[RMDB]
RNA sequence: GGGAACGACUCGAGUAGAGUCGAAAAUCGUCCUAUUCUAGGAACGAGGAGAUAGAGUCUUUAGAGCAGUUUCAUAUGGCAACGGCAGAUUCGUUAAUUCGUAAGCAGAUGAGCUCGAUUGUGUACAGUCGACAGAAUUGUUCGCAAUUCUGUCGACAAAAGAAACAACAACAACAAC
Reactivity to DMS in 0.01 (KOAc 150mM, MgCl2 10mM, bicine 150mM(pH8.5), 24C), signal-to-noise 1, nucleotides 027 to 126: u040c000g000u000c120c000u000a020u020u010c060u000a010g010g050a040a060c010g020a100g000g020a140g000a000u000a070g060a030g000u000c020u000u080u050a110g010a260g010c150a080g000u000u000u040c110a120u000a050u020g000g000c110a040a010c030g000g090c130a050g000a150u000u000c000g000u040u000a000a200u000u040c090g000u020a030a090g110c150a050g010a050u000g000a230g040c040u000c000g000a080u040u040g000u030g000u000a060c060a130
Reactivity to 2A3 in 0.01 (KOAc 150mM, MgCl2 10mM, bicine 150mM(pH8.5), 24C), signal-to-noise 2, nucleotides 027 to 126: u000c000g000u000c070c000u000a060u020u110c240u180a000g000g080a130a000c010g000a020g060g060a030g000a000u100a050g070a040g100u080c040u000u110u010a080g060a000g020c080a060g000u020u010u020c070a030u020a140u250g040g040c020a090a000c000g000g000c040a000g020a300u000u000c020g000u020u010a070a060u170u000c030g050u110a170a000g000c020a000g120a100u070g100a100g000c020u020c000g090a120u010u020g030u040g010u070a040c040a020